[RMDB]
RNA sequence: GGGAACGACUCGAGUAGAGUCGAAAAGAUAUGGACCUUAUUACGAAGCGUUAGGUGGACAUGACGGCACAUCGGAAACGAUGUGUACGUCAACAGCCACUAACGCUUCGUAAUAAGGUCCUAAGUCCUAUUGUAUCUCGUUCGCGAGAUACAAUAGAAAAGAAACAACAACAACAAC
Reactivity to DMS in 0.01 (KOAc 150mM, MgCl2 10mM, bicine 150mM(pH8.5), 24C), signal-to-noise 5, nucleotides 027 to 126: g000a100u000a300u010g010g010a020c000c000u000u000a010u000u000a020c000g010a020a010g020c000g010u000u000a050g030g010u010g010g000a070c120a290u000g000a010c000g000g000c010a020c000a010u010c000g000g010a140a120a250c000g000a010u000g020u000g020u000a020c000g010u000c000a020a040c270a230g000c000c010a030c000u000a010a000c000g010c000u000u010c000g000u000a000a000u000a000a000g010g010u000c000c000u000a010a050g010u000c040
Structure probing data (DMS) for a 177-nucleotide construct. The DMS profile rests on 12,425 reads. DMS adducts were read by reverse transcription with MarathonRT. Source: RMDB library TTRINS, as collected in RNAgym.